Chemical mapping of a 177-nucleotide RNA with DMS and 2A3. For DMS the reverse transcriptase was MarathonRT. The data come from the RNA Mapping Database (RMDB), library OK2TST. Conditions: 150 mM KOAc, 10 mM MgCl2 and 150 mM bicine (pH 8.5), 24 C.

RNA sequence: GGGAACGACUCGAGUAGAGUCGAAAACAUCUUGUCUGGCAGACAUAGCCUGGGCUGCUGACUGUCCCUACCCCAAACCAGAAUUUGGGCAGGAACGGACACUUGGGCUCAUUACGUGUCAAUGAGGCUAAGCUGAAAUGUUCGCAUUUCAGCUUAGAAAAGAAACAACAACAACAAC
Reactivity to DMS in 0.01 (KOAc 150mM, MgCl2 10mM, bicine 150mM(pH8.5), 24C), signal-to-noise 7, nucleotides 027 to 126: c100a090u010c050u000u010g020u000c050u000g010g010c040a070g010a070c090a060u000a090g010c060c070u000g000g000g020c100u010g010c080u000g020a110c020u010g000u010c010c000c010u010a170c240c010c000c030a010a060a070c100c120a170g020a100a270u000u000u000g000g010g060c240a030g010g000a040a040c070g010g010a090c050a040c070u000u000g010g010g000c020u010c060a040u000u000a060c180g010u000g020u000c060a040a050u010g000a130g020g000
Reactivity to 2A3 in 0.01 (KOAc 150mM, MgCl2 10mM, bicine 150mM(pH8.5), 24C), signal-to-noise 5, nucleotides 027 to 126: c020a060u080c030u100u090g030u010c070u050g060g000c010a020g010a070c030a080u070a010g020c010c010u030g010g050g020c060u050g020c030u050g080a090c010u030g030u010c010c000c000u030a070c000c020c010c020a020a020a070c090c070a130g060a230a120u020u020u030g010g000g000c020a020g030g010a040a030c030g010g020a020c000a010c060u050u090g030g010g000c000u020c030a050u070u150a050c090g040u030g030u080c030a030a070u110g010a020g020g030